RNA sequence: GGGAACGACUCGAGUAGAGUCGAAAAGGAGAGUCCCGCUCCUUCAGGUGAACGAUCUCGGUUGUUUCUCUGAAGGCAUGAUCACCCCGUCCGAUGCGGAACUUCGUGCUUCCGUCGAACGCGAAAGUAAAACCCUAAAGCUUCGGCUUUAGGGUAAGCUAUGACACUAGUUCGCUAGUGUCAUAGCAAAAGAAACAACAACAACAAC
Reactivity to DMS in 0.01 (KOAc 150mM, MgCl2 10mM, bicine 150mM(pH8.5), 24C), signal-to-noise 2, nucleotides 027 to 156: g010g030a120g000a110g000u000c010c000c030g000c030u000c010c010u010u020c030a050g030g000u000g020a040a030c020g000a040u000c020u010c220g030g030u010u000g020u000u000u000c040u000c020u000g010a040a040g000g010c070a040u000g010a090u000c050a110c070c000c010c010g000u000c000c030g000a090u000g020c060g020g000a040a060c020u000u000c200g020u000g040c010u020u000c000c020g030u000c020g000a060a050c020g010c040g000a090a050a070g020u010a090a060a130a080c000c000c000u000a010a010a050g000c000u000u000c300g050g010c000u000u000u000a010g000g020g010u000a000a010
Reactivity to 2A3 in 0.01 (KOAc 150mM, MgCl2 10mM, bicine 150mM(pH8.5), 24C), signal-to-noise 4, nucleotides 027 to 156: g100g030a050g010a020g110u030c000c000c020g010c040u010c010c000u020u000c020a040g010g040u090g060a040a010c010g010a040u020c050u090c200g100g000u040u010g010u020u080u020c010u000c010u010g020a040a010g020g000c010a090u230g040a020u080c030a100c020c010c000c000g010u020c020c020g020a040u130g060c030g020g010a010a010c050u150u160c160g090u160g060c070u030u010c020c010g030u050c050g020a030a000c020g040c020g030a090a000a000g080u110a030a040a070a040c010c010c000u010a010a000a010g020c010u020u160c220g080g000c000u000u030u000a000g000g010g000u000a000a000